Chemical mapping of a 177-nucleotide RNA with 2A3 and DMS. 2A3 adducts were read by reverse transcription with SuperScript II with manganese. For DMS the reverse transcriptase was MarathonRT.
RNA sequence: GGGAACGACUCGAGUAGAGUCGAAAAUUUAACAACCAUGUUCACUUUCCACUUGAGAAGACACAAAAAUUGUCUUGUCGCUUUAGGAUAAUGUGUUGACUCGCAGGAACUAGUUGCAAUGAACGGCCGUCCGGCACAUAUUCGUAUGUGCCGGACGAAAAGAAACAACAACAACAAC
Reactivity to 2A3 in 0.01 (KOAc 150mM, MgCl2 10mM, bicine 150mM(pH8.5), 24C), signal-to-noise 1, nucleotides 027 to 126: u050u030u040a180a110c010a040a110c070c030a050u070g000u000u010c060a040c160u010u000u000c030c010a130c070u040u100g000a000g010a080a000g030a010c000a000c040a040a080a050a110a120u070u020g020u040c000u010u020g250u050c120g050c090u080u210u260a030g000g000a030u010a040a030u060g050u000g000u010u080g020a000c000u050c000g050c110a100g000g040a010a010c010u000a040g060u010u070g030c000a080a140u020g020a070a000c050g030g000c000
Reactivity to DMS in 0.01 (KOAc 150mM, MgCl2 10mM, bicine 150mM(pH8.5), 24C), signal-to-noise 1, nucleotides 027 to 126: u000u000u040a050a040c100a120a200c010c040a000u000g020u000u000c050a080c130u000u000u000c060c060a290c240u000u050g010a000g000a000a190g000a000c000a000c090a010a020a010a130a020u000u000g000u000c010u000u000g000u030c150g050c220u000u060u000a040g010g020a020u010a050a160u020g000u000g000u050u000g030a300c000u000c030g000c210a060g000g000a020a010c130u000a090g030u000u020g000c020a080a080u000g000a010a050c020g010g000c100